Chemical mapping of a 177-nucleotide RNA with 2A3 and DMS.
Reactivities are rounded to 0.1 and cut off at 0 and 3.
It was measured as part of the RMDB library RFMREP.
For 2A3, 1,673 sequencing reads were counted.
For DMS, 2,799 sequencing reads were counted.
The reactions ran in a buffer of 150 mM KOAc, 10 mM MgCl2 and 150 mM bicine (pH 8.5), at 24 C.
[RMDB]
RNA sequence: GGGAACGACUCGAGUAGAGUCGAAAAUAGUAUUUGGCAGAGGUGUAUGGAGUGAGAGAAGGGAAAAACGCCUUUGCCGAUCUCAUCGGUUCUUUUUUUCCUCUCUCAUUCCAUACAUCGUCUGACGCAUUUACUUGCGGUUCGCCGCAAGUAAAUGAAAAGAAACAACAACAACAAC
Reactivity to 2A3 in 0.01 (KOAc 150mM, MgCl2 10mM, bicine 150mM(pH8.5), 24C), signal-to-noise 1, nucleotides 027 to 126: u130a050g140u120a180u150u140u180g080g000c000a010g000a010g010g010u020g010u000a000u000g010g000a000g010u010g010a010g000a010g010a120a160g010g000g050a000a020a000a000a000c030g030c030c020u090u110u150g000c010c010g000a000u050c120u040c150a100u000c000g040g000u100u110c030u000u020u030u000u010u010u000c000c000u000c000u000c010u000c020a000u020u030c000c000a010u000a000c000a000u000c000g010u000c000u000g010a010c010g000
Reactivity to DMS in 0.01 (KOAc 150mM, MgCl2 10mM, bicine 150mM(pH8.5), 24C), signal-to-noise 3, nucleotides 027 to 126: u010a090g010u000a180u010u000u000g020g010c030a010g000a180g010g010u000g010u000a000u000g000g010a030g040u000g000a020g000a010g010a080a050g000g000g020a000a010a010a000a010c280g010c300c160u010u010u000g010c050c010g000a010u000c150u010c220a050u000c030g010g010u000u000c010u000u000u000u000u000u000u000c000c010u000c000u000c000u000c010a020u000u000c000c000a010u000a010c000a000u000c000g000u000c010u010g000a030c050g000